[RMDB]
An RNA of 177 nucleotides, treated with DMS and 2A3 and read out base by base.
DMS adducts were read by reverse transcription with MarathonRT.
The reactions ran in a buffer of 150 mM KOAc, 10 mM MgCl2 and 150 mM bicine (pH 8.5), at 24 C.
It was measured as part of the RMDB library OK1LIB.
For 2A3 the reverse transcriptase was SuperScript II with manganese.
RNA sequence: GGGAACGACUCGAGUAGAGUCGAAAAGCGCGUAGGUUCAGAUGAUGGGCCCGCAUCUGUACGAAAGGCAGACGAAAGUCCAGCCUACGUGCAUGAGCACGCGGGCCCCGUGCUCUACUGCAAAAGACCCGCAUAUCGUAUUCGUACGAUAUGCGGGAAAAGAAACAACAACAACAAC
Reactivity to DMS in 0.01 (KOAc 150mM, MgCl2 10mM, bicine 150mM(pH8.5), 24C), signal-to-noise 1, nucleotides 027 to 126: g000c160g000c040g000u000a010g000g000u000u070c210a130g000a030u090g020a090u000g020g000g000c000c000c050g020c040a050u000c020u000g020u010a020c000g020a050a030a000g030g000c040a170g000a000c000g020a140a140a260g030u000c000c090a040g000c000c000u000a050c000g000u010g000c000a000u040g020a040g010c150a050c150g010c040g000g000g000c000c000c000c000g000u000g040c020u030c000u000a040c020u010g010c000a060a040a130a110g010a200
Reactivity to 2A3 in 0.01 (KOAc 150mM, MgCl2 10mM, bicine 150mM(pH8.5), 24C), signal-to-noise 3, nucleotides 027 to 126: g080c000g010c020g030u040a020g040g030u100u090c050a020g040a170u110g010a050u080g070g000g000c010c000c000g000c000a030u020c020u000g000u000a060c020g050a190a080a010g010g000c000a010g000a010c020g080a110a040a000g000u020c010c000a030g000c000c000u000a020c000g010u000g000c010a060u220g000a020g060c120a040c140g000c030g020g020g000c000c000c000c000g000u010g010c000u060c010u030a060c050u080g050c030a010a020a000a050g110a050